Structure probing data (2A3 and DMS) for a 177-nucleotide construct.
RNA sequence: GGGAACGACUCGAGUAGAGUCGAAAAGAUAUGGAGCAUUCAGGCUAGCGAGGUGGUCGGAAACGACCACUCGCUUGGACCCUGGUGCUCCUAAGUCAAACCUUGGUGCUCUUCGGAGCACCAAGGACUCUGUAUACGCGUUCGCGCGUAUACAGAGAAAAGAAACAACAACAACAAC
Reactivity to 2A3 in 0.01 (KOAc 150mM, MgCl2 10mM, bicine 150mM(pH8.5), 24C), signal-to-noise 2, nucleotides 027 to 126: g020a000u040a030u140g040g000a000g000c020a010u270u300c030a300g030g000c060u080a030g040c020g040a030g110g300u130g070g000u040c000g020g000a100a060a020c000g000a000c000c000a000c010u000c010g000c000u020u040g010g080a040c050c010c000u000g000g000u000g000c000u010c010c000u010a040a000g050u000c030a120a030a120c000c000u020u000g000g010u010g020c000u010c000u090u170c300g070g000a020g000c000a010c010c010a000a000g000g000a010
Reactivity to DMS in 0.01 (KOAc 150mM, MgCl2 10mM, bicine 150mM(pH8.5), 24C), signal-to-noise 1, nucleotides 027 to 126: g000a050u000a300u000g000g000a020g020c000a010u000u020c020a020g050g020c200u000a030g020c010g010a040g020g020u010g010g010u000c040g000g000a080a090a180c000g020a000c000c010a030c010u000c010g000c020u010u000g010g020a130c300c000c010u010g000g020u000g010c000u030c010c000u000a010a070g000u020c030a100a100a170c010c000u000u000g000g010u000g000c000u000c000u010u030c220g010g000a020g050c000a010c000c010a000a000g030g000a190
The RNA was probed in 150 mM KOAc, 10 mM MgCl2 and 150 mM bicine (pH 8.5) at 24 C.